[RMDB]
RNA sequence: GGGAACGACUCGAGUAGAGUCGAAAACAAAAUUAUCAUUUGUCGAGUAUCCUACCGGGCUUUUCACAAAUGAAUCGUUAACUUUUAAGGAGUGCAUAGUGGCCCGUAUCGCUGGCAUUAAAACAAACAGGUAGCAUGCAUUCGUGCAUGCUACCUGAAAAGAAACAACAACAACAAC
Reactivity to 2A3 in 0.01 (KOAc 150mM, MgCl2 10mM, bicine 150mM(pH8.5), 24C), signal-to-noise 1, nucleotides 027 to 126: c070a000a000a080a000u120u040a130u090c000a000u000u000u000g010u000c000g060a000g040u000a050u110c020c000u040a250c000c060g000g010g000c060u040u030u150u050c000a000c000a080a000a000u040g100a110a060u000c000g000u130u200a150a300c010u100u270u080u070a000a000g130g080a080g010u050g000c010a010u040a110g130u230g000g000c000c000c000g000u000a050u040c040g000c010u040g020g000c000a050u000u300a110a060a050a050c090a000a100a000
Chemical mapping of a 177-nucleotide RNA with 2A3. It was measured as part of the RMDB library OK1LIB. The RNA was probed in 150 mM KOAc, 10 mM MgCl2 and 150 mM bicine (pH 8.5) at 24 C. Reactivities are given for positions 27 through 126.